[RMDB]
RNA sequence: GGGAACGACUCGAGUAGAGUCGAAAAUGUUUAGGGAGAAGAUAAAGCUGGUUGAAGACAACGACACCUUUGAUACAACCGUCGCUUGUUUUUGACCAGAUCGUGUGGACAGGCCCAACCUUGAAGGCCAACGAACUUAAUUCGUUAAGUUCGUUGGAAAAGAAACAACAACAACAAC
Reactivity to 2A3 in 0.01 (KOAc 150mM, MgCl2 10mM, bicine 150mM(pH8.5), 24C), signal-to-noise 7, nucleotides 027 to 126: u120g010u030u070u050a080g000g100g000a100g030a150a100g020a130u130a140a190a020g040c000u000g000g000u010u010g000a000a010g010a000c000a010a000c010g010a000c000a070c030c040u150u090u230g200a200u210a130c080a080a090c070c040g000u020c000g020c190u010u010g000u000u000u000u000u000g010a000c000c000a000g000a010u010c010g000u020g070u080g050g020a020c040a040g050g000c000c000c010a030a070c020c020u020u080g070a100a030g060g000
Reactivity to DMS in 0.01 (KOAc 150mM, MgCl2 10mM, bicine 150mM(pH8.5), 24C), signal-to-noise 7, nucleotides 027 to 126: u010g010u000u010u010a100g010g020g000a120g010a090a110g000a110u020a080a070a130g000c010u000g000g010u000u000g000a000a010g000a010c020a010a020c010g000a010c000a100c160c140u010u040u030g010a190u030a080c290a070a100c270c120g000u000c010g000c240u010u000g000u000u000u000u000u000g000a020c010c000a010g000a030u010c070g010u010g020u010g010g010a090c090a050g000g000c010c000c020a070a090c100c060u010u050g020a110a100g010g010